[RMDB]
An RNA of 177 nucleotides, treated with DMS and 2A3 and read out base by base. The RNA was probed in 150 mM KOAc, 10 mM MgCl2 and 150 mM bicine (pH 8.5) at 24 C. For 2A3 the reverse transcriptase was SuperScript II with manganese. DMS adducts were read by reverse transcription with MarathonRT.
RNA sequence: GGGAACGACUCGAGUAGAGUCGAAAAAGGAGGUCAGGUGUGAACCACAGGAACCACGAGUUUAGUUCCGAGGAACCAACUGCGGUUCCAAGGGCUAAACACCCUCGCCCCGAAGCAAGUAAGAUAGGAACUAGUAUAAGUUCGCUUAUACUAGUUCAAAAGAAACAACAACAACAAC
Reactivity to DMS in 0.01 (KOAc 150mM, MgCl2 10mM, bicine 150mM(pH8.5), 24C), signal-to-noise 7, nucleotides 027 to 126: a030g000g000a030g010g010u000c080a060g010g010u000g010u000g010a060a090c030c010a040c060a120g000g000a050a050c010c010a020c030g000a100g010u000u000u000a010g010u000u010c010c000g000a300g000g000a010a000c000c010a060a070c150u000g010c110g020g000u000u000c000c010a030a220g000g000g000c010u000a040a040a050c100a180c070c010c010u000c120g010c030c000c000c100g000a080a080g010c140a070a080g000u010a060a070g010a090u010a070g020
Reactivity to 2A3 in 0.01 (KOAc 150mM, MgCl2 10mM, bicine 150mM(pH8.5), 24C), signal-to-noise 3, nucleotides 027 to 126: a000g080g010a020g020g000u110c120a040g010g110u060g050u050g140a080a030c050c020a040c080a130g000g040a030a030c010c010a000c040g070a080g020u010u000u010a040g000u300u300c000c000g000a010g000g000a000a000c010c010a040a060c190u290g090c120g060g000u000u000c000c000a000a000g000g000g000c000u000a000a000a000c000a010c000c000c000u000c030g050c010c000c000c020g050a070a020g050c080a050a030g060u190a140a040g050a190u170a110g160